[RMDB]
RNA sequence: GGGAACGACUCGAGUAGAGUCGAAAACAGUCACCAGAUCGCCCACUUCCUGGCUCUCCUCCACAGAUGAAUGGUGCCGAGAAAACAAAGUGUAAUUGGCUUUCUCUUUCUGCAGAUGAACUUCAGCUGCCAAGUUGGGAUUCGUCCCAACUUGGCAAAAAGAAACAACAACAACAAC
Reactivity to DMS in 0.01 (KOAc 150mM, MgCl2 10mM, bicine 150mM(pH8.5), 24C), signal-to-noise 1, nucleotides 027 to 126: c130a110g020u000c030a100c030c030a030g020a100u000c120g000c020c000c040a130c110u000u000c050c010u000g000g000c080u010c020u000c070c000u030c010c040a070c090a120g010a070u000g010a070a060u010g000g000u010g020c020c060g020a070g000a080a040a040a020c090a060a100a160g020u040g000u020a050a190u000u010g000g010c050u000u000u000c010u000c040u010u000u000c000u060g030c030a080g000a070u000g010a090a040c060u000u000c030a070g020c180